Chemical mapping of a 177-nucleotide RNA with DMS and 2A3. The RNA was probed in 150 mM KOAc, 10 mM MgCl2 and 150 mM bicine (pH 8.5) at 24 C. DMS adducts were read by reverse transcription with MarathonRT.
[RMDB]
RNA sequence: GGGAACGACUCGAGUAGAGUCGAAAAUAGUUUAACUGGGGCGGUUGCCUCCCAAAAUGUAACGGAGGCGCCCAAAGGUUCCCUCAGCCUGGUUGGCAAUCAGGUGUCGAGUGCAAGUGCACAAGGGAAUAGACUUAAGCUUCGGCUUAAGUCUAUUAAAAGAAACAACAACAACAAC
Reactivity to DMS in 0.01 (KOAc 150mM, MgCl2 10mM, bicine 150mM(pH8.5), 24C), signal-to-noise 5, nucleotides 027 to 126: u050a110g000u010u030u020a070a040c050u000g000g020g020g010c060g010g010u010u040g010c010c000u020c010c000c170a080a060a130a150u060g020u040a110a100c300g000g000a040g000g010c030g000c000c000c020a030a030a060g000g010u000u000c000c000c000u000c050a300g000c030c000u000g000g010u000u000g010g030c170a160a030u010c010a000g000g000u010g010u010c210g010a120g000u010g000c020a220a080g020u050g000c010a000c030a150a080g000g010g010
Reactivity to 2A3 in 0.01 (KOAc 150mM, MgCl2 10mM, bicine 150mM(pH8.5), 24C), signal-to-noise 4, nucleotides 027 to 126: u090a010g160u090u080u030a090a040c030u050g010g000g070g000c110g020g070u160u300g000c000c010u040c010c010c000a120a280a130a100u300g050u090a060a030c060g000g000a000g000g000c000g000c000c000c010a050a090a000g020g000u020u040c000c000c000u000c010a020g000c000c000u020g010g020u020u030g110g000c060a020a010u030c000a000g000g000u050g060u130c080g040a050g030u030g010c020a170a180g100u130g150c010a010c000a040a050g040g010g030